Chemical mapping of a 177-nucleotide RNA with DMS and 2A3. Reactivities are rounded to 0.1 and cut off at 0 and 3. For 2A3 the reverse transcriptase was SuperScript II with manganese. For DMS, 2,098 sequencing reads were counted. The reactions ran in a buffer of 150 mM KOAc, 10 mM MgCl2 and 150 mM bicine (pH 8.5), at 24 C.
RNA sequence: GGGAACGACUCGAGUAGAGUCGAAAACGCUGACGGGUUCGCAGCGCACCGGACCAACACGACCGGCGGGUAUCGCGCCGUGUUCGCGUCGGGAUCGACCGGCGAGGUAUUCGACUACCGCGCGCCGUGAGUCUCUAACGUUCGCGUUAGAGACUCAAAAAGAAACAACAACAACAAC
Reactivity to DMS in 0.01 (KOAc 150mM, MgCl2 10mM, bicine 150mM(pH8.5), 24C), signal-to-noise 2, nucleotides 027 to 126: c060g000c020u010g000a100c080g020g010g050u010u000c040g030c030a030g000c030g040c040a200c040c020g000g030a100c050c000a080a030c070a050c070g020a030c000c020g000g010c000g000g010g010u000a090u000c160g000c000g020c010c010g010u000g030u030u000c020g020c060g000u000c040g000g000g000a150u020c040g020a140c060c000g010g010c020g010a040g010g000u000a050u000u000c240g000a090c190u000a070c060c010g000c110g000c010g020c050c060g000
Reactivity to 2A3 in 0.01 (KOAc 150mM, MgCl2 10mM, bicine 150mM(pH8.5), 24C), signal-to-noise 2, nucleotides 027 to 126: c020g000c030u030g050a050c040g150g040g120u180u230c030g000c030a040g020c000g030c010a030c000c000g030g000a030c030c020a050a020c050a000c040g080a010c000c030g000g010c020g010g010g120u230a130u300c080g020c010g040c180c020g040u110g020u140u080c000g000c000g020u000c050g070g000g010a170u080c000g070a090c090c000g000g000c010g010a010g000g000u030a040u040u240c050g070a030c030u040a040c000c010g000c000g000c000g020c060c040g100